[RMDB]
RNA sequence: GGGAACGACUCGAGUAGAGUCGAAAAGAGCCCUACUUGCCUUCGAAUGAACUUCCCCAUAACAGGGCUUGAUUAUAGAUAAAACAAUUCAGAGAAGAUUGAGGGUGCAAACUACAGAUUGCAUAUGAUCUACGUCAUCAUUCGUGAUGACGUAGAUAAAAGAAACAACAACAACAAC
Reactivity to 2A3 in 0.01 (KOAc 150mM, MgCl2 10mM, bicine 150mM(pH8.5), 24C), signal-to-noise 2, nucleotides 027 to 126: g040a010g010c000c000c040u030a070c040u010u100g070c010c000u040u030c030g080a110a090u040g010a100a040c020u050u020c060c000c000c020a030u030a100a030c030a060g000g000g020c000u000u000g000a000u010u080a060u060a100g030a050u210a120a110a020a000c050a030a040u070u070c020a040g080a000g000a190a020g000a060u040u140g030a030g010g060g000u000g000c010a070a070a010c020u090a060c050a030g080a250u000u090g030c010a020u070a150u240g050
Reactivity to DMS in 0.01 (KOAc 150mM, MgCl2 10mM, bicine 150mM(pH8.5), 24C), signal-to-noise 4, nucleotides 027 to 126: g020a050g010c000c000c000u000a120c080u000u000g010c080c030u000u000c030g000a140a080u020g000a080a090c100u000u000c020c000c000c100a080u020a070a120c150a030g000g000g000c030u000u000g000a100u000u010a110u010a080g020a180u010a050a080a100a130c140a050a090u010u000c040a060g020a290g000a060a070g000a090u000u010g000a050g010g000g040u000g000c060a030a030a060c090u010a130c210a080g010a120u000u010g020c020a050u000a130u000g000

An RNA of 177 nucleotides, treated with 2A3 and DMS and read out base by base. For 2A3 the reverse transcriptase was SuperScript II with manganese. For DMS the reverse transcriptase was MarathonRT. The data come from the RNA Mapping Database (RMDB), library OK2TST. For DMS, 2,478 sequencing reads were counted. For 2A3, 1,531 sequencing reads were counted. The RNA was probed in 150 mM KOAc, 10 mM MgCl2 and 150 mM bicine (pH 8.5) at 24 C.